[RMDB]
RNA sequence: GGGAACGACUCGAGUAGAGUCGAAAAUACCGCAUCACGGUGCAUGUCCAACAGGCCCGGACGGUCUUGGAUCCGUUCCCGCGUGACGGGUACCGCGGAGUCUUCGAGAGCGGGCAGGUGCGGAUCGUAGCCUCAUGUGAUUCGUCACAUGAGGCUAAAAAGAAACAACAACAACAAC
Reactivity to 2A3 in 0.01 (KOAc 150mM, MgCl2 10mM, bicine 150mM(pH8.5), 24C), signal-to-noise 1, nucleotides 027 to 126: u080a000c000c000g000c000a000u050c010a010c070g000g000u070g000c060a060u080g040u090c080c000a050a050c020a070g100g000c020c000c010g040g020a030c020g000g090u040c020u000u070g070g000a050u010c010c010g000u030u000c010c000c000g000c020g060u160g040a190c020g000g000g060u070a080c000c040g020c020g040g000a070g090u040c000u000u040c030g050a050g000a020g050c000g000g030g000c030a050g020g030u020g020c030g000g010a030u090c060g070
Reactivity to DMS in 0.01 (KOAc 150mM, MgCl2 10mM, bicine 150mM(pH8.5), 24C), signal-to-noise 3, nucleotides 027 to 126: u010a150c010c000g010c000a000u010c000a140c030g000g010u020g030c010a110u000g020u020c060c110a080a270c060a070g000g000c020c000c020g010g000a070c020g000g000u010c020u010u000g020g020a080u000c060c050g000u000u000c020c010c020g040c050g020u020g010a130c060g010g000g000u020a070c140c260g010c020g000g000a060g010u000c070u000u000c060g000a070g000a080g010c050g020g000g000c250a100g010g000u000g000c000g010g000a080u010c160g020